[RMDB]
RNA sequence: GGGAACGACUCGAGUAGAGUCGAAAAGGCAAAAGCGGAACUGGUAAAAGUCACUUAUCGCACGGAAUUGCCAAAGAAGUAUCCGAUACUAAAAAAUGGGUUGUUCCAUAUGUGAAUGUAGUAGAUUUCAUGACAAGACUUAAUUUUGAUAACAAGGGACUAUGCUAAUUUUCGAAUUAGCAUAGUCAAAAGAAACAACAACAACAAC
Reactivity to 2A3 in 0.01 (KOAc 150mM, MgCl2 10mM, bicine 150mM(pH8.5), 24C), signal-to-noise 3, nucleotides 027 to 156: g020g000c000a000a000a030a030g020c020g010g040a030a060c090u100g020g000u140a090a150a040a020g050u070c020a020c050u060u080a050u120c060g000c050a010c020g030g000a050a040u040u020g000c000c000a090a000a000g090a070a020g030u030a040u050c080c080g060a050u100a120c080u180a010a010a060a030a080a180u120g030g000g000u030u020g010u030u000c030c010a070u060a090u120g050u010g040a060a050u110g000u090a040g020u010a020g020a130u060u120u080c060a030u130g050a050c030a030a050g020a010c010u020u070a020a130u070u090u060u060g080a090u040a110a010c000a020a010g170g010
Reactivity to DMS in 0.01 (KOAc 150mM, MgCl2 10mM, bicine 150mM(pH8.5), 24C), signal-to-noise 3, nucleotides 027 to 156: g000g030c040a040a070a090a080g030c040g020g000a100a070c070u000g020g000u000a060a080a100a140g020u000c000a040c070u000u000a060u000c010g020c050a130c080g010g020a060a070u000u020g020c030c000a060a130a130g010a130a080g010u000a080u000c080c040g010a180u000a140c040u020a010a030a080a120a100a110u000g010g010g020u000u000g000u000u000c020c010a180u000a030u000g030u000g010a050a070u010g050u010a060g010u000a070g010a080u000u000u010c030a070u010g030a080c030a040a080g020a050c030u020u000a060a090u000u000u000u020g010a080u000a060a110c070a040a090g000g020
Source information: This 207-nucleotide RNA was probed chemically with 2A3 and DMS. The RNA was probed in 150 mM KOAc, 10 mM MgCl2 and 150 mM bicine (pH 8.5) at 24 C. For 2A3, 2,488 sequencing reads were counted. DMS adducts were read by reverse transcription with MarathonRT.